[RMDB]
RNA sequence: GGGAACGACUCGAGUAGAGUCGAAAACUUGAGAAUUCUGAGUGAGGGUACUGUAGCAUCGGGUUACUGUACACCAAUCCAGACGAUUCUCAGGUGGUUCGACGCCGGUGAACAGCUAUGGCCUCUGCAUAACCGAACCUUUCGAGGUUCGGUUAUGAAAAGAAACAACAACAACAAC
Reactivity to DMS in 0.01 (KOAc 150mM, MgCl2 10mM, bicine 150mM(pH8.5), 24C), signal-to-noise 6, nucleotides 027 to 126: c010u000u000g000a020g000a010a000u000u000c000u010g000a170g010u000g000a300g010g000g010u000a000c000u010g000u000a000g010c000a300u030c210g000g010g000u000u000a010c000u000g010u010a010c000a140c010c000a000a250u000c000c000a030g000a080c300g000a060u000u000c000u000c000a000g000g010u000g000g010u010u000c030g000a030c090g010c030c020g020g020u000g000a100a060c110a090g010c030u000a060u020g010g000c020c010u000c050u010g010
Reactivity to 2A3 in 0.01 (KOAc 150mM, MgCl2 10mM, bicine 150mM(pH8.5), 24C), signal-to-noise 8, nucleotides 027 to 126: c000u000u000g000a000g000a020a020u200u000c010u010g090a120g120u020g010a020g010g000g000u010a010c010u050g000u010a010g000c030a080u300c220g210g180g020u000u000a010c010u020g000u020a010c170a240c050c000a000a010u000c000c000a010g020a030c060g080a010u010u000c000u000c000a000g030g010u020g000g130u020u050c020g010a020c030g010c030c020g020g020u070g050a110a040c030a070g030c020u060a090u190g030g010c000c000u040c010u050g010